[RMDB]
RNA sequence: GGGAACGACUCGAGUAGAGUCGAAAAAACUUUGAACAAGGCAGAAUUGAAGCACAAUAAGAAGCGGCAGAACCUCCGAGACUUUCUCCCCAAAGGACGAUUUUAUCUGCUGGAGUUGUGCGGAGAGGACUAUUAGUGCCUUCGGGCACUAAUAGUCAAAAGAAACAACAACAACAAC
Reactivity to DMS in 0.01 (KOAc 150mM, MgCl2 10mM, bicine 150mM(pH8.5), 24C), signal-to-noise 1, nucleotides 027 to 126: a080a000c050u010u000u020g010a110a180c080a040a010g000g000c080a040g010a110a100u000u030g020a180a060g000c000a030c050a000a010u000a070a130g020a060a080g010c060g010g030c080a040g000a090a070c140c050u000c030c020g000a120g000a180c110u000u000u000c060u000c010c000c030c110a080a110a080g010g000a060c060g000a080u000u000u020u000a060u000c040u000g010c010u000g010g030a130g020u000u000g030u000g010c020g010g020a230g010a040g010